Structure probing data (2A3 and DMS) for a 177-nucleotide construct. The DMS profile rests on 5,040 reads. For 2A3 the reverse transcriptase was SuperScript II with manganese. It was measured as part of the RMDB library OK2TRN. The RNA was probed in 150 mM KOAc, 10 mM MgCl2 and 150 mM bicine (pH 8.5) at 24 C.
RNA sequence: GGGAACGACUCGAGUAGAGUCGAAAACGCGUUCUUCGACGUGAUGCAGCCCGCGAAGGACGCAUGGGGCGCGGCGUUCUGCAUCGGCACGUCGUUCGUCGUGCGACGCGAUCUCGUCGAGCGCAUACAUAGCUGGAGUGUUCGCACUCCAGCUAUGAAAAGAAACAACAACAACAAC
Reactivity to 2A3 in 0.01 (KOAc 150mM, MgCl2 10mM, bicine 150mM(pH8.5), 24C), signal-to-noise 3, nucleotides 027 to 126: c070g020c000g010u050u050c040u070u050c030g130a140c010g060u050g020a000u030g040c030a030g030c010c010c000g000c020g030a090a050g070g040a020c020g000c030a020u070g050g020g020g010c020g000c000g030g000c040g030u100u030c040u080g030c030a110u090c030g050g020c020a010c030g030u010c010g000u100u070c060g190u030c010g000u040g010c030g010a020c040g020c020g060a080u030c040u000c050g030u010c000g000a040g000c010g000c000a020u050a110
Reactivity to DMS in 0.01 (KOAc 150mM, MgCl2 10mM, bicine 150mM(pH8.5), 24C), signal-to-noise 3, nucleotides 027 to 126: c140g010c010g020u000u000c070u010u010c010g020a050c060g040u000g010a040u000g010c010a090g000c090c050c020g000c040g020a080a080g010g000a110c030g020c050a010u000g000g000g020g000c040g000c020g000g000c080g020u000u010c060u000g010c050a030u010c060g020g030c050a050c040g010u000c030g000u000u010c060g010u010c070g010u010g010c020g000a080c060g000c050g000a080u000c040u000c010g010u000c030g000a080g000c010g010c040a100u020a170